This 207-nucleotide RNA was probed chemically with 2A3 and DMS. The RNA was probed in 150 mM KOAc, 10 mM MgCl2 and 150 mM bicine (pH 8.5) at 24 C.
[RMDB]
RNA sequence: GGGAACGACUCGAGUAGAGUCGAAAACCUACCUUUCGAGGUAGGAAAAAAUCCUAAGUCUCGGUGGCAGAGCGACAUGCCUUAUCGGAAACGAUAAGGCAACAGCGCUCUGAACUACCACACGAGAUAUGGAAAAAAACGUUCGUUCGCGAACGAAUCAUAAUUCGUGAUUCGUCACGAAUUAUGAAAAAGAAACAACAACAACAAC
Reactivity to 2A3 in 0.01 (KOAc 150mM, MgCl2 10mM, bicine 150mM(pH8.5), 24C), signal-to-noise 4, nucleotides 027 to 156: c000c000u010a010c010c000u070u130u190c250g070a010g000g010u000a000g000g000a090a010a000a020a000a060u060c030c010u050a160a030g020u000c000u000c000g000g010u000g000g020c000a000g000a000g010c010g080a130c030a100u060g000c000c000u020u010a000u000c010g040g030a120a030a040c000g000a010u000a000a000g000g000c000a000a030c030a000g010c000g000c000u000c000u000g000a000a000c020u080a070c020c000a010c010a050c010g000a000g000a000u020a040u040g020g050a030a050a000a010a100a000a040c020g000u010u020c000g010u020u050c260g010c010g130a000a000c000g010a010a040
Reactivity to DMS in 0.01 (KOAc 150mM, MgCl2 10mM, bicine 150mM(pH8.5), 24C), signal-to-noise 3, nucleotides 027 to 156: c000c010u000a020c010c010u020u000u010c220g050a010g020g030u000a020g030g020a000a000a060a110a050a100u000c000c010u010a100a280g030u000c010u000c000g000g000u010g010g040c030a030g000a030g060c010g000a040c090a300u010g000c020c000u010u000a010u000c000g040g030a220a090a260c010g010a030u020a010a010g000g000c000a000a000c050a150g000c000g010c010u010c000u000g010a040a040c040u000a260c000c000a000c000a130c000g030a010g000a040u000a180u000g000g000a000a000a080a110a070a040a180c090g030u000u000c030g020u010u000c250g020c030g020a030a030c000g020a030a120
For 2A3 the reverse transcriptase was SuperScript II with manganese. High 2A3 reactivity points to a flexible backbone, as in loops and unpaired stretches.